[RMDB]
RNA sequence: GGGAACGACUCGAGUAGAGUCGAAAAAGGUGCUAAGUCUAAUAACCGCACCGAUUUCGCCCUCGCUGCCUGAUUAGGCCGAGCUGCGAAUCCGUCAGUCUAGAGUUGCUUCCACUCUAGGUCCUGGCGUCGCUUAGGGAGCCACUGCUUCAGAUAUCACUAGCACUUAGUUCGCUAAGUGCUAGUGAAAAGAAACAACAACAACAAC
Reactivity to 2A3 in 0.01 (KOAc 150mM, MgCl2 10mM, bicine 150mM(pH8.5), 24C), signal-to-noise 3, nucleotides 027 to 156: a000g030g000u010g030c040u150a070a070g070u070c090u150a160a190u130a230a130c030c030g000c000a000c000c000g000a000u040u100u020c000g010c020c080c000u020c010g140c140u160g030c000c010u210g080a300u210u300a020g000g000c000c000g000a000g020c040u040g000c010g000a010a010u040c030c000g000u000c010a000g000u000c000u000a000g000a020g010u010u170g040c010u060u000c010c010a000c000u000c000u000a000g000g000u040c030c020u000g010g010c010g090u060c040g000c100u070u150a040g000g000g010a000g000c000c020a070c050u060g010c030u050u030c020a020g020a270u100a040u110
Structure probing data (2A3) for a 207-nucleotide construct. The RNA was probed in 150 mM KOAc, 10 mM MgCl2 and 150 mM bicine (pH 8.5) at 24 C. The 2A3 profile rests on 1,535 reads. Values cover nucleotides 27 to 156. For 2A3 the reverse transcriptase was SuperScript II with manganese.